[RMDB]
RNA sequence: GGGAACGACUCGAGUAGAGUCGAAAACAAGAAGGCAUGUACAACCUUUUGGUCAUGGAUCUUCUAGGACCUAGUUUAGAGGACCUUUUUGAUUAUUGUGGCAGACGUUUUAGUCCUAAAACCGUUGCCAUGAUUGCAAAACAAAUGAUCACCCGUACCUAAUUAAAUGAUUCGUCAUUUAAUUAGGAAAAGAAACAACAACAACAAC
Reactivity to DMS in 0.01 (KOAc 150mM, MgCl2 10mM, bicine 150mM(pH8.5), 24C), signal-to-noise 4, nucleotides 027 to 156: c040a100a100g010a050a030g020g020c010a110u000g020u010a100c090a100a060c070c030u010u000u020u000g010g020u000c020a060u000g010g020a090u000c010u000u000c020u000a040g010g020a090c030c060u000a070g010u000u000u000a110g010a060g020g010a060c030c000u010u000u000u010u000g020a110u010u010a050u000u010g050u010g010g020c000a080g020a080c090g020u000u000u000u000a040g020u010c160c070u000a030a020a020a010c070c050g030u000u000g010c000c010a020u000g010a020u000u000g000c030a020a020a050a100c110a070a100a070u000g010a070u000c040a170c020c000c020g010u000a140
Reactivity to 2A3 in 0.01 (KOAc 150mM, MgCl2 10mM, bicine 150mM(pH8.5), 24C), signal-to-noise 8, nucleotides 027 to 156: c040a020a050g060a020a020g040g010c050a050u100g030u150a040c040a070a110c070c010u070u080u060u060g000g000u010c010a030u030g010g040a110u010c000u000u000c000u010a010g010g040a020c000c000u010a020g010u010u050u050a030g010a010g020g030a020c010c000u030u050u010u050u050g160a180u060u150a010u010u030g020u000g010g000c020a020g030a260c020g010u000u010u000u060a080g130u230c040c080u030a020a020a000a000c060c060g030u030u010g000c000c000a000u000g010a010u000u060g000c020a000a020a040a070c040a030a140a100u130g030a070u110c040a050c090c020c030g050u090a060
The record gives the reactivity of an RNA of 207 nucleotides to DMS and 2A3. DMS adducts were read by reverse transcription with MarathonRT. 2A3 adducts were read by reverse transcription with SuperScript II with manganese.